[RMDB]
RNA sequence: GGGAACGACUCGAGUAGAGUCGAAAAGACGGACUCUUCUUGGAAUGUGAGGAGUCCGAGCCUUCUCACAUUCCAUUUGCCAUGAGGAGGCAGUGGACUUCAUGGCGAAACUAGAUGAGGUCUACAGGCAGUGGUGUCUAUUCGUAGACAUCACUGCAAAAGAAACAACAACAACAAC
Reactivity to 2A3 in 0.01 (KOAc 150mM, MgCl2 10mM, bicine 150mM(pH8.5), 24C), signal-to-noise 5, nucleotides 027 to 126: g060a010c060g020g010a010c010u010c010u040u020c010u020u050g000g010a010a000u010g010u000g000a010g010g000a000g000u000c050c000g000a020g010c000c000u000u010c000u000c000a000c000a000u020u010c000c000a030u020u010u040g010c010c010a010u010g010a000g040g020a020g030g060c070a040g100u120g050g050a030c000u010u000c010a000u000g010g000c020g010a040a040a020c060u040a010g010a030u020g020a010g030g070u010c010u030a040c030a020g140
Reactivity to DMS in 0.01 (KOAc 150mM, MgCl2 10mM, bicine 150mM(pH8.5), 24C), signal-to-noise 8, nucleotides 027 to 126: g010a110c090g000g000a300c090u000c010u000u000c040u000u000g010g000a030a020u000g000u000g000a010g010g000a000g010u010c060c110g000a030g000c270c000u000u000c000u000c000a020c030a030u000u000c010c010a110u000u000u000g010c010c010a030u000g010a020g000g000a080g000g000c060a090g000u000g000g010a120c000u000u000c000a010u000g000g000c010g010a020a050a190c230u000a030g000a030u000g000a190g000g000u000c010u000a090c170a110g010
This 177-nucleotide RNA was probed chemically with 2A3 and DMS. The 2A3 profile rests on 30,076 reads. The RNA was probed in 150 mM KOAc, 10 mM MgCl2 and 150 mM bicine (pH 8.5) at 24 C. DMS adducts were read by reverse transcription with MarathonRT. The data come from the RNA Mapping Database (RMDB), library OK2TRN.